The record gives the reactivity of an RNA of 207 nucleotides to 2A3 and DMS.
RNA sequence: GGGAACGACUCGAGUAGAGUCGAAAAGUGGUGCGCGGAGAGGGUAACCACCGGCGCGCGUCACUGAUAUAUCCACCGGGGGGUAAGGGGAGAAAAGGAUACAGCGCGACGAAGCUAGCACGCUGCCGAAAUGUACCCACAUUCGUGUGGGUACAAAUGUUGAACCUAGAUUCGUCUAGGUUCAACAAAAAGAAACAACAACAACAAC
Reactivity to 2A3 in 0.01 (KOAc 150mM, MgCl2 10mM, bicine 150mM(pH8.5), 24C), signal-to-noise 1, nucleotides 027 to 156: g020u010g020g020u010g000c030g000c010g130g150a130g020a130g220g040g000u080a050a100c020c010a030c050c030g040g050c020g000c000g000c000g010u010c010a020c000u000g010a000u070a010u030a020u070c100c040a040c070c030g030g000g000g000g020g040u010a040a040g010g020g010g010a030g110a030a070a020a010g000g000a000u030a230c020a010g050c000g020c010g020a130c020g030a100a000g030c020u020a010g000c030a010c020g050c000u010g040c000c000g030a040a110a000u090g000u000a000c000c000c020a000c000a000u090u190c200g060u030g000u010g000g000g000u000a000c000a000a000a000
Reactivity to DMS in 0.01 (KOAc 150mM, MgCl2 10mM, bicine 150mM(pH8.5), 24C), signal-to-noise 1, nucleotides 027 to 156: g000u000g050g010u000g030c010g070c000g030g050a200g000a090g000g000g000u020a080a160c160c090a130c010c000g010g010c000g050c000g000c040g020u000c000a060c010u000g000a180u000a090u000a050u000c010c020a120c040c010g000g000g000g000g010g000u010a060a100g000g000g040g000a110g000a070a080a050a150g000g010a200u000a030c040a090g050c000g070c000g000a130c070g000a130a090g000c090u000a090g040c080a030c050g020c030u000g020c000c030g000a100a090a120u010g000u000a010c000c020c020a010c010a150u000u000c220g040u000g010u010g010g030g060u000a010c000a000a030a050

2A3 adducts were read by reverse transcription with SuperScript II with manganese. For 2A3, 602 sequencing reads were counted.